[RMDB]
RNA sequence: GGGAACGACUCGAGUAGAGUCGAAAAUUGCCCCGGAUCAACUUUAAUAGUUAUGACGGUUUCCGACUCGGGAAAAUAGAUUCUUGCAUAACGACGGAAAUUUCAGAGUUUGUUCUGAAUGUCUCCAUGACGCUAUUUAUUUCGAUAAAUAGCGUCAAAAAGAAACAACAACAACAAC
Reactivity to 2A3 in 0.01 (KOAc 150mM, MgCl2 10mM, bicine 150mM(pH8.5), 24C), signal-to-noise 6, nucleotides 027 to 126: u150u110g120c030c020c000c000g040g020a080u040c020a010a060c020u060u120u220a220a100u210a100g040u060u090a020u120g080a020c040g010g010u020u000u000c030c010g080a110c070u030c050g010g000g020a020a040a030a050u220a040g130a130u080u050c040u040u220g020c000a050u030a110a040c030g050a020c020g040g050a030a100a060u080u120u040c010a010g000a020g090u070u170u270g100u100u000c010u010g030a060a040u040g040u020c020u000c020c000a030
Reactivity to DMS in 0.01 (KOAc 150mM, MgCl2 10mM, bicine 150mM(pH8.5), 24C), signal-to-noise 4, nucleotides 027 to 126: u040u040g000c150c010c000c070g000g000a100u020c090a040a040c030u010u020u030a090a090u060a110g000u000u000a060u010g010a140c090g010g000u000u000u000c020c000g010a100c120u020c070g020g000g010a050a040a070a080u020a060g000a120u020u010c050u000u040g020c070a060u030a080a090c090g000a090c120g000g000a030a090a080u010u000u000c030a050g000a030g010u020u020u030g020u020u000c010u000g010a010a020u020g000u000c070u000c000c020a220